[RMDB]
RNA sequence: GGGAACGACUCGAGUAGAGUCGAAAAUAAGUCUAGUUCGCUAGACUUACUAUCGGGAAAACAGCCUCCCGGCUCGAUCUGGCGGAUUCCGUCCAAGCGCUGCAACACACGUAUUCGUACGUGUGAAACGUAUUAAAUUAUUCGUAAUUUAAUACGUAAAAGAAACAACAACAACAAC
Reactivity to DMS in 0.01 (KOAc 150mM, MgCl2 10mM, bicine 150mM(pH8.5), 24C), signal-to-noise 9, nucleotides 027 to 126: u000a010a010g000u000c000u000a010g010u000u010c210g020c000u000a000g010a020c000u000u000a000c070u010a120u010c020g000g010g000a040a050a090a190c040a020g000c020c020u000c010c000c010g010g010c030u000c020g010a090u010c160u000g010g000c020g000g010a220u000u010c030c020g010u000c020c170a050a040g010c110g010c020u000g010c140a110a250c010a010c000a000c000g010u000a020u010u010c180g010u000a000c000g010u000g010u000g000a020a080
Reactivity to 2A3 in 0.01 (KOAc 150mM, MgCl2 10mM, bicine 150mM(pH8.5), 24C), signal-to-noise 9, nucleotides 027 to 126: u030a000a000g000u000c000u010a010g010u030u050c160g020c110u000a000g000a000c000u000u000a010c000u050a030u120c020g000g000g030a020a100a020a050c010a010g010c000c000u000c000c000c000g030g000c020u010c020g070a120u040c070u120g020g000c030g070g170a300u300u110c040c010g010u020c030c030a030a020g030c050g010c140u030g040c030a110a090c000a000c000a000c010g000u010a010u030u090c220g030u040a010c000g000u010g000u000g000a020a010

Chemical mapping of a 177-nucleotide RNA with DMS and 2A3. For 2A3 the reverse transcriptase was SuperScript II with manganese. High DMS reactivity at an A or C suggests that its Watson-Crick edge is free. Source: RMDB library M2PK50, as collected in RNAgym.